[RMDB]
RNA sequence: GGGAACGACUCGAGUAGAGUCGAAAAAGAGAUAUAGAUAUGGAUGCGUGCAAGGUCGACCACUACCCACCUCGGAAACGAGAGGUGGUCCAGACUGAUGACCACGCAUCCUAAGUCCUGCUGUGAAGAGUAAAUCAGAGUUCGCUCUGAUUUACUCAAAAGAAACAACAACAACAAC
Reactivity to DMS in 0.01 (KOAc 150mM, MgCl2 10mM, bicine 150mM(pH8.5), 24C), signal-to-noise 5, nucleotides 027 to 126: a090g010a140g000a130u000a100u010a050g000a100u010a260u010g000g010a010u010g000c000g030u000g000c010a030a030g020g030u000c000g000a020c020c010a020c010u000a100c040c020c060a300c170c000u000c000g000g000a090a070a160c020g000a030g000a110g000g000u000g000g000u000c010c140a100g010a000c010u000g000a020u000g000a110c300c000a000c010g000c010a010u000c000c000u000a030a080g000u000c020c060u000g020c110u000g030u000g010a080a070
Reactivity to 2A3 in 0.01 (KOAc 150mM, MgCl2 10mM, bicine 150mM(pH8.5), 24C), signal-to-noise 4, nucleotides 027 to 126: a000g150a020g040a020u140a020u180a300g080a030u130a060u280g000g020a000u000g010c000g000u000g000c050a210a210g020g000u000c010g010a010c000c000a000c000u170a210c040c020c020a010c000c010u000c010g030g050a100a070a050c010g000a010g010a020g000g000u000g000g000u000c040c040a060g000a010c000u020g140a300u060g010a100c000c000a000c000g000c010a000u000c000c000u000a000a000g010u000c000c030u080g070c050u120g130u090g230a190a240

Conditions: 150 mM KOAc, 10 mM MgCl2 and 150 mM bicine (pH 8.5), 24 C. An RNA of 177 nucleotides, treated with DMS and 2A3 and read out base by base.